[RMDB]
RNA sequence: GGGAACGACUCGAGUAGAGUCGAAAAGAUAUGGAUGAGCGAGGAUCUGACGAGGUUGACCACGUCGGAAACGAUAUCAAACCCGUCAGGGAGCUCAUCCUAAGUCAAAGUCGUGUUCGCACGACAACCCUAUGUUUUCCUUCGGGAAAACAUAGGGAAAAGAAACAACAACAACAAC
Reactivity to 2A3 in 0.01 (KOAc 150mM, MgCl2 10mM, bicine 150mM(pH8.5), 24C), signal-to-noise 3, nucleotides 027 to 126: g030a020u080a060u150g000g000a010u020g000a000g000c020g050a260g040g010a020u000c010u000g010a010c040g120a260g060g000u010u020g010a060c040c050a110c300g020u010c000g020g000a040a080a020c000g000a010u030a010u200c070a010a090a180c020c000c010g000u000c010a000g010g000g000a010g000c000u020c000a000u000c000c010u010a000a000g000u000c050a170a050a000g000u000c010g000u010g040u090u160c300g010c070a000c000g000a000c010a020a040
Reactivity to DMS in 0.01 (KOAc 150mM, MgCl2 10mM, bicine 150mM(pH8.5), 24C), signal-to-noise 2, nucleotides 027 to 126: g000a050u010a300u000g010g010a000u000g010a000g000c000g000a110g000g030a030u040c000u000g030a000c000g020a060g020g000u000u000g000a080c300c230a070c240g010u000c000g000g000a130a090a160c010g000a020u000a100u020c050a100a020a030c000c000c000g000u000c000a010g010g000g000a020g000c000u000c010a000u000c000c000u000a010a050g020u000c020a090a150a120g020u000c010g000u000g010u010u020c170g010c000a000c000g010a000c030a070a080